Annotation:
An RNA of 207 nucleotides, treated with 2A3 and DMS and read out base by base. For 2A3, 2,047 sequencing reads were counted. The reactions ran in a buffer of 150 mM KOAc, 10 mM MgCl2 and 150 mM bicine (pH 8.5), at 24 C. Source: RMDB library OK3TST, as collected in RNAgym. For DMS, 6,827 sequencing reads were counted.

RNA sequence: GGGAACGACUCGAGUAGAGUCGAAAAUGCGGUCGUUAUGGGUUGUCGGUCGGCAAAGGACGCAGAAAUGAUUGGGCUAGCCACCCGAGACUGUUCAAUGACGUGGCGAGAAACCUGCACAGGGGGAAUACUGUGCAGGUGGAUUUAUCAGCGACGGCGUAUCUGGGAUGUUCGCAUCCCAGAUACGAAAAGAAACAACAACAACAAC
Reactivity to 2A3 in 0.01 (KOAc 150mM, MgCl2 10mM, bicine 150mM(pH8.5), 24C), signal-to-noise 2, nucleotides 027 to 156: u140g010c020g010g000u040c030g040u140u130a100u180g030g010g030u080u040g070u080c000g010g010u030c030g020g010c010a010a040a070g070g010a020c060g010c050a030g100a060a090a040u160g050a120u070u100g020g010g000c000u010a010g020c010c030a010c020c010c000g010a030g010a030c060u090g070u170u050c050a070a060u070g020a020c020g020u030g060g000c000g010a030g010a040a030a000c000c000u000g010c000a000c000a010g030g020g000g000g060a130a000u050a050c000u000g000u010g000c000a000g000g020u010g000g000a010u060u090u090a130u080c060a040g000c010g090a020c020g030g040
Reactivity to DMS in 0.01 (KOAc 150mM, MgCl2 10mM, bicine 150mM(pH8.5), 24C), signal-to-noise 3, nucleotides 027 to 156: u000g020c020g010g010u000c020g030u000u000a050u010g020g000g000u000u010g030u010c030g060g020u000c030g040g020c040a030a090a120g020g000a080c110g010c050a070g000a040a070a090u000g010a130u000u010g000g020g040c000u010a220g010c040c080a080c000c010c000g000a090g020a140c020u010g000u000u010c060a080a180u010g020a070c030g010u010g020g020c010g000a150g010a210a250a030c000c000u000g000c020a030c000a030g050g000g010g060g030a160a200u000a060c010u010g010u000g010c000a010g000g020u000g010g000a260u000u010u000a120u010c080a150g000c020g010a070c030g020g010